Record summary
An RNA of 177 nucleotides, treated with 2A3 and DMS and read out base by base.
RNA sequence: GGGAACGACUCGAGUAGAGUCGAAAAAGCUAAGUAUGAUACGACAGAACCACAACGUAUGUUAUUAGGUAAACCAGCAGUAAGUGAACAACCAGCUAAAGGACAACAAGGUAGCAAAGGUAGUGAGUAGAGGCCAAUAUUUCGAUAUUGGCCUCUAAAAAGAAACAACAACAACAAC
Reactivity to 2A3 in 0.01 (KOAc 150mM, MgCl2 10mM, bicine 150mM(pH8.5), 24C), signal-to-noise 2, nucleotides 027 to 126: a000g080c070u150a010a100g030u060a050u160g110a020u050a120c030g030a070c100a040g210a200a070c070c020a040c070a080a000c020g030u100a000u080g100u110u060a230u150u060a000g130g000u120a010a040a050c000c020a010g000c000a010g020u100a210a000g020u060g060a030a030c020a040a020c000c000a000g010c000u050a070a180a030g060g050a000c000a030a000c000a130a000g140g000u030a000g060c000a000a000a040g070g040u070a040g000u010g040a030g080
Reactivity to DMS in 0.01 (KOAc 150mM, MgCl2 10mM, bicine 150mM(pH8.5), 24C), signal-to-noise 3, nucleotides 027 to 126: a080g000c070u010a070a120g000u000a020u000g020a090u000a030c030g060a070c240a100g000a110a140c020c070a030c120a110a050c070g010u010a060u020g010u000u000a050u010u020a040g000g000u010a040a100a090c020c040a080g020c090a060g010u000a060a060g010u020g020a100a060c080a020a120c040c020a110g000c020u060a030a120a080g000g000a080c140a030a120c070a070a070g000g000u010a030g020c020a010a020a060g020g000u000a010g000u000g000a090g020

The RNA was probed in 150 mM KOAc, 10 mM MgCl2 and 150 mM bicine (pH 8.5) at 24 C. For 2A3, 1,076 sequencing reads were counted. Source: RMDB library OK1LIB, as collected in RNAgym.